[RMDB]
RNA sequence: GGGAACGACUCGAGUAGAGUCGAAAAUUGAGAGUAAUGGCUAAAAUUAUGAGAGAAUGUUGGUAUGCCAAUGGAGCAGCUAGGCUUACAGCAUUGCGGAUUAAGAAAACAUUAUCGCAACUCAGUCUACGACUAGGUUAUUCGUAACCUAGUCGUAAAAAGAAACAACAACAACAAC
Reactivity to DMS in 0.01 (KOAc 150mM, MgCl2 10mM, bicine 150mM(pH8.5), 24C), signal-to-noise 5, nucleotides 027 to 126: u050u000g000a060g010a110g000u010a030a020u000g000g000c100u020a040a030a090a070u000u010a040u010g000a300g000a110g020a030a020u000g000u000u000g000g010u010a030u010g000c010c020a120a110u040g000g000a080g010c080a090g000c090u010a120g020g000c020u000u020a030c040a040g000c010a030u000u000g010c060g000g000a090u000u000a040a070g000a100a070a050a060c090a010u010u000a030u010c080g000c080a060a070c070u000c050a050g020u020c140
Reactivity to 2A3 in 0.01 (KOAc 150mM, MgCl2 10mM, bicine 150mM(pH8.5), 24C), signal-to-noise 6, nucleotides 027 to 126: u100u070g020a030g000a000g000u070a040a060u020g030g030c120u120a060a030a030a110u130u110a120u130g040a030g010a020g020a090a060u050g010u030u010g150g050u100a040u080g000c000c000a020a010u090g040g050a090g060c050a020g040c050u080a070g010g000c000u010u040a030c010a010g020c010a010u010u120g090c040g040g010a010u070u050a060a050g060a080a060a020a020c030a000u020u080a020u110c040g000c070a030a050c050u030c060a030g110u020c020